[RMDB]
RNA sequence: GGGAACGACUCGAGUAGAGUCGAAAACUAUGUACAGACAGUACAGUGGAUAAGGUCUUUCGAUAUCCAACUGUAACAAUGGUACUUGCAGUGGUAUCUAUCAAGAUAGGCAGGCUAUCAUAGAAAGAAGAUGUGUAUUUUUCGAAGUACGCAUCUUAAAAGAAACAACAACAACAAC
Reactivity to 2A3 in 0.01 (KOAc 150mM, MgCl2 10mM, bicine 150mM(pH8.5), 24C), signal-to-noise 9, nucleotides 027 to 126: c010u030a040u110g060u030a040c020a080g120a030c020a030g050u020a000c000a010g000u020g020g000a020u010a050a060g120g050u060c060u030u060u070c020g040a030u010a000u010c010c000a060a090c020u000g000u010a080a010c030a040a030u070g020g000u020a020c000u000u030g020c020a040g040u060g090g040u030a010u000c020u010a130u090c060a070a030g000a010u010a010g020g020c030a000g040g000c010u000a000u020c010a020u010a030g060a010a040a000g050
Reactivity to DMS in 0.01 (KOAc 150mM, MgCl2 10mM, bicine 150mM(pH8.5), 24C), signal-to-noise 9, nucleotides 027 to 126: c020u000a050u030g010u010a040c080a130g010a130c190a130g010u010a030c000a010g010u000g000g000a020u010a020a070g000g010u020c060u000u010u010c010g010a090u000a010u000c000c010a020a100c020u000g010u020a060a050c120a060a140u020g000g010u000a020c010u000u000g010c020a110g010u030g010g010u000a010u000c010u000a100u060c230a070a030g000a020u000a020g010g000c020a020g000g010c200u000a010u000c010a030u010a040g000a030a030a030g000

An RNA of 177 nucleotides, treated with 2A3 and DMS and read out base by base. Conditions: 150 mM KOAc, 10 mM MgCl2 and 150 mM bicine (pH 8.5), 24 C. The DMS profile rests on 130,302 reads. It was measured as part of the RMDB library OK1LIB. Reactivities are given for positions 27 through 126. For 2A3 the reverse transcriptase was SuperScript II with manganese.